[RMDB]
RNA sequence: GGGAACGACUCGAGUAGAGUCGAAAACUAGGUGUGUGAGAGUGUGCGUGUAUGCUUGUGUCUGUGGGAAAGGUAAGGCUAUUGCAAAUAGCUGGCAGGCAGGGGUCCAUAGAAGCUGUGAGAUGGAGCCCUUUAGUUGGUUCGCCAACUAAAGGGCAAAAGAAACAACAACAACAAC
Reactivity to DMS in 0.01 (KOAc 150mM, MgCl2 10mM, bicine 150mM(pH8.5), 24C), signal-to-noise 1, nucleotides 027 to 126: c050u000a050g010g010u000g000u010g030u010g010a040g010a130g020u000g040u000g010c110g000u010g020u010a080u000g010c080u000u000g000u000g020u010c060u000g040u000g000g010g010a070a050a100g000g020u000a060a120g020g000c020u000a030u010u020g000c210a050a070a040u010a000g000c020u000g020g010c040a060g000g030c050a030g000g020g030g010u000c020c040a050u010a060g010a100a070g030c050u000g000u000g010a080g010a060u000g000g010a240